Background: Chemical mapping of a 177-nucleotide RNA with 2A3 and DMS. Reactivities are given for positions 27 through 126. Conditions: 150 mM KOAc, 10 mM MgCl2 and 150 mM bicine (pH 8.5), 24 C. Source: RMDB library OK2TST, as collected in RNAgym. DMS (dimethyl sulfate) methylates the pairing face of unpaired adenines and cytosines. For DMS, 7,735 sequencing reads were counted.
RNA sequence: GGGAACGACUCGAGUAGAGUCGAAAAGGAAGGUCUGGGCGAAGUGCAGGAAAUGAUCGAUAUCUGCGAUUUCGCAGUCGGUCUGUCGCGCCAGCUUUACGGCCUCACCAUCGCCACCGAACGCGCACCUAAUGGGAGUGUUCGCACUCCCAUUAGGAAAAGAAACAACAACAACAAC
Reactivity to 2A3 in 0.01 (KOAc 150mM, MgCl2 10mM, bicine 150mM(pH8.5), 24C), signal-to-noise 4, nucleotides 027 to 126: g040g010a070a010g030g020u000c030u080g020g020g030c010g040a080a020g030u060g030c040a050g070g150a080a170a160u140g010a020u010c020g010a020u020a110u220c020u010g000c020g130a210u140u180u220c040g000c000a000g010u000c000g000g010u000c000u030g120u100c030g000c010g040c040c010a020g000c000u040u050u070a050c060g010g000c000c000u000c040a120c010c010a050u060c030g010c030c010a050c030c030g020a090a040c030g010c020g020c040a050
Reactivity to DMS in 0.01 (KOAc 150mM, MgCl2 10mM, bicine 150mM(pH8.5), 24C), signal-to-noise 6, nucleotides 027 to 126: g000g000a220a030g000g010u010c010u010g020g000g000c010g010a060a130g000u010g020c030a160g000g010a080a110a080u010g000a020u010c010g010a090u010a110u010c050u000g010c000g010a300u010u010u010c010g020c000a020g010u000c010g010g000u010c000u000g010u000c080g010c050g010c020c020a220g000c030u000u000u020a050c160g010g010c000c010u000c100a090c020c010a060u010c060g000c030c020a090c080c040g000a060a050c130g010c070g000c200a220